Chemical mapping of a 177-nucleotide RNA with 2A3 and DMS. The RNA was probed in 150 mM KOAc, 10 mM MgCl2 and 150 mM bicine (pH 8.5) at 24 C. Values cover nucleotides 27 to 126. For 2A3 the reverse transcriptase was SuperScript II with manganese.
RNA sequence: GGGAACGACUCGAGUAGAGUCGAAAACACUUUCAGGCCGGCCGCUUUCACCUGGAUGGCAGCCGCGAGAGCUUCGACUGCCUCUUCGAGCUGCUGGAGCACUACGUGGCGGCGCCGCGCCGCAUGCCUUCCAAAUGCAGUUCGCUGCAUUUGGAAGAAAAGAAACAACAACAACAAC
Reactivity to 2A3 in 0.01 (KOAc 150mM, MgCl2 10mM, bicine 150mM(pH8.5), 24C), signal-to-noise 2, nucleotides 027 to 126: c030a030c030u120u210u210c060a000g010g000c000c000g010g050c110c080g030c010u040u060u030c020a040c020c030u050g110g040a090u060g070g010c020a010g000c010c010g020c080g030a000g000a000g040c000u140u160c120g210a170c150u070g060c030c010u030c020u070u080c040g040a040g000c000u000g040c000u010g030g070a070g060c060a030c110u150a030c060g020u020g030g000c040g010g000c020g010c000c010g010c030g020c010c000g000c000a060u160g060c010
Reactivity to DMS in 0.01 (KOAc 150mM, MgCl2 10mM, bicine 150mM(pH8.5), 24C), signal-to-noise 2, nucleotides 027 to 126: c050a150c160u000u000u010c120a210g010g020c050c030g000g010c080c080g050c030u010u000u000c070a050c000c040u000g010g030a150u000g010g000c010a040g010c010c010g000c300g000a020g000a050g020c060u000u010c140g020a110c150u000g020c090c040u000c020u010u030c030g000a140g010c000u000g010c020u000g000g000a090g000c100a210c030u010a080c230g020u000g030g000c030g010g010c060g030c020c010g040c230g040c020c000g030c170a110u000g010c090